Structure probing data (DMS and 2A3) for a 177-nucleotide construct.
[RMDB]
RNA sequence: GGGAACGACUCGAGUAGAGUCGAAAAAAACUUAAGAGUUGUGGCUAUGACCGCAACCCCUGCUGGGACAGUGACAACGACUGGGCAAAAACACCCAAUUGAGGAAUUCAUUGCACCCGAGGUCAUGCACCAGAAACUAGUUCGCUAGUUUCUGGUGAAAAGAAACAACAACAACAAC
Reactivity to DMS in 0.01 (KOAc 150mM, MgCl2 10mM, bicine 150mM(pH8.5), 24C), signal-to-noise 2, nucleotides 027 to 126: a030a030a060c110u000u010a030a040g020a200g010u010u030g000u000g000g020c000u000a080u000g000a170c030c000g020c010a030a000c010c040c000c020u020g020c000u100g000g070g010a300c020a050g000u000g000a000c100a070a290c040g030a000c060u010g010g000g000c070a040a010a220a050a100c300a060c080c000c000a050a040u000u020g000a080g000g030a170a080u020u010c000a000u000u000g000c060a010c000c010c000g010a080g020g010u020c090a120u020g020
Reactivity to 2A3 in 0.01 (KOAc 150mM, MgCl2 10mM, bicine 150mM(pH8.5), 24C), signal-to-noise 3, nucleotides 027 to 126: a000a000a000c080u080u050a110a000g020a000g070u000u000g000u000g010g000c050u150a180u300g050a250c000c000g000c020a000a020c000c000c010c000u010g020c060u300g000g000g020a010c000a020g000u010g020a010c060a080a060c090g040a000c030u040g000g010g010c030a040a080a120a110a050c030a050c010c000c020a020a090u100u040g030a160g040g060a040a050u060u060c010a010u030u010g010c020a010c030c000c000g000a020g020g020u030c030a110u150g050

Background
For DMS the reverse transcriptase was MarathonRT. For DMS, 2,000 sequencing reads were counted. The reactions ran in a buffer of 150 mM KOAc, 10 mM MgCl2 and 150 mM bicine (pH 8.5), at 24 C. For 2A3, 2,033 sequencing reads were counted.